[RMDB]
RNA sequence: GGGAACGACUCGAGUAGAGUCGAAAAUGUCGGCAAGCUCUAUAUAUGGACACUUACGAAGGGUUUUGGUUGUUUUGUAUCUCAAGCCGACUUUGAGUAUUUGAGGAAAAUACGACAGGAAAAACAAAUAGACCGGUAUCCUUCGGGAUACCGGUAACUGUUACACAGUGUUCGCACUGUGUAACAGAAAAGAAACAACAACAACAAC
Reactivity to DMS in 0.01 (KOAc 150mM, MgCl2 10mM, bicine 150mM(pH8.5), 24C), signal-to-noise 2, nucleotides 027 to 156: u010g000u010c010g000g030c000a060a090g040c050u000c010u000a100u010a180u000a060u010g020g000a060c030a060c050u020u000a090c090g030a100a110g010g050g010u000u000u000u000g030g040u000u000g000u000u000u000u020g000u000a090u000c040u000c020a050a250g040c040c010g010a040c050u000u000u000g000a290g010u000a030u000u000u000g030a260g020g000a110a040a060a010u000a020c030g010a130c110a070g000g000a030a030a050a100a180c010a040a120a120u000a160g020a060c000c000g000g030u020a010u000c000c000u000u000c300g000g020g000a000u000a010c000c000g000g030u000a000a050
Reactivity to 2A3 in 0.01 (KOAc 150mM, MgCl2 10mM, bicine 150mM(pH8.5), 24C), signal-to-noise 1, nucleotides 027 to 156: u060g000u000c010g000g000c030a000a070g000c090u000c020u070a140u020a060u010a060u170g110g000a060c060a020c090u110u140a050c120g120a090a110g040g020g000u010u030u080u120g050g010u000u030g000u020u040u020u080g010u040a020u060c050u020c070a020a040g000c000c000g010a000c000u000u030u040g030a000g000u000a000u010u040u080g050a090g000g120a030a030a000a000u020a000c030g040a020c050a050g090g050a030a070a070a000a020c040a010a080a060u060a050g090a000c010c010g030g000u020a000u000c000c000u000u030c050g020g000g000a000u000a000c000c000g000g000u000a020a000
An RNA of 207 nucleotides, treated with DMS and 2A3 and read out base by base. For 2A3, 804 sequencing reads were counted. 2A3 adducts were read by reverse transcription with SuperScript II with manganese.